[RMDB]
RNA sequence: GGGAACGACUCGAGUAGAGUCGAAAAUGGUGGGCCACUCUUGAGGCUGUGGCCGGCCAGCCCUAUCGGCUAGGUGAACCACACUACACACAUACAUUUGCCAGGCCUGCUAGGCCUCUGGGUGACAAUAUGAUCCGGUUUUCGAACCGGAUCAUAUAAAAGAAACAACAACAACAAC
Reactivity to 2A3 in 0.01 (KOAc 150mM, MgCl2 10mM, bicine 150mM(pH8.5), 24C), signal-to-noise 1, nucleotides 027 to 126: u070g000g010u050g090g040g010c030c000a020c000u090c040u050u170g090a060g090g030c040u010g040u130g030g020c030c030g000g010c000c000a020g000c000c000c010u040a140u150c100g010g030c050u030a040g050g000u010g070a040a010c030c000a040c020a000c060u160a060c040a010c040a000c000a030u090a100c030a080u060u010u120g050c020c010a020g020g000c020c000u060g020c080u100a050g030g000c000c010u000c020u050g050g000g010u040g020a000c050a020
Reactivity to DMS in 0.01 (KOAc 150mM, MgCl2 10mM, bicine 150mM(pH8.5), 24C), signal-to-noise 3, nucleotides 027 to 126: u000g010g020u000g020g020g000c020c010a000c000u010c070u020u000g010a070g010g010c110u000g010u010g010g020c010c010g010g020c000c010a080g000c040c000c050u000a110u010c100g000g000c030u000a050g010g010u000g010a060a090c090c070a080c080a060c060u000a090c110a030c080a070c130a060u010a080c140a070u000u000u000g020c020c050a180g010g000c000c010u000g030c140u010a200g000g010c010c010u000c040u000g000g010g000u000g010a100c190a110